[RMDB]
RNA sequence: GGGAACGACUCGAGUAGAGUCGAAAAAUGCUUUUUAUAACCUGUGUACUGUCGUGUUUAACGACACAUUUUAUUUAAUUGUUUUAUCCAUGGGCGUUUAUAAAGGGGGUUAGGGGGUCUGGACCCCUGUCACUUGCUCUUUCGAGAGCAAGUGACAAAAAGAAACAACAACAACAAC
Reactivity to 2A3 in 0.01 (KOAc 150mM, MgCl2 10mM, bicine 150mM(pH8.5), 24C), signal-to-noise 1, nucleotides 027 to 126: a000u120g010c020u020u110u000u000u000a030u050a080a070c040c000u020g070u000g010u280a040c060u050g030u070c010g100u070g080u150u190u270a060a000c000g000a000c000a000c000a000u000u080u130u300a230u000u030u060a140a190u010u000g080u040u130u080u120a140u160c140c190a060u040g010g000g080c070g000u000u000u070a120u090a000a060a010g000g000g000g000g090u010u050a050g010g000g000g000g040u000c040u040g010g130a060c000c000c000c050